[RMDB]
RNA sequence: GGGAACGACUCGAGUAGAGUCGAAAAUUGUCCGGGUUCGCCCGGACAAAGCGGGAGGCGACCGGAGGCCUCCUCCCAGGCGAACCCACGCCUCGCUCCGGAGCGUGAUGACCUUCGGGUCAUCAAAAACAAUAGAUUACUUCGGUAAUCUAUUGUUAAAAGAAACAACAACAACAAC
Reactivity to 2A3 in 0.01 (KOAc 150mM, MgCl2 10mM, bicine 150mM(pH8.5), 24C), signal-to-noise 2, nucleotides 027 to 126: u030u020g000u010c000c000g010g010g010u020u040c200g050c000c000c000g010g010a000c010a010a000a000g020c040g030g030g000a000g000g010c010g060a090c010c020g000g020a010g000g040c010c010u000c010c000u020c000c000c000a000g000g020c000g020a110a120c010c010c020a040c020g000c000c020u030c070g060c010u000c000c000g020g010a030g090c110g060u070g000a000u000g000a000c000c000u030u050c230g100g000g000u000c000a000u000c000a020a020a000
Reactivity to DMS in 0.01 (KOAc 150mM, MgCl2 10mM, bicine 150mM(pH8.5), 24C), signal-to-noise 5, nucleotides 027 to 126: u000u000g010u000c000c000g020g010g010u000u010c210g020c000c000c000g020g000a010c010a000a020a060g010c240g010g000g000a020g010g010c030g020a100c020c010g000g010a040g010g000c040c040u000c010c010u010c010c000c010a070g010g010c010g000a080a150c040c030c050a200c000g000c010c000u000c100g010c020u000c010c010g010g000a190g010c240g000u000g000a010u000g010a010c000c000u000u010c170g030g010g010u000c010a000u010c010a020a050a070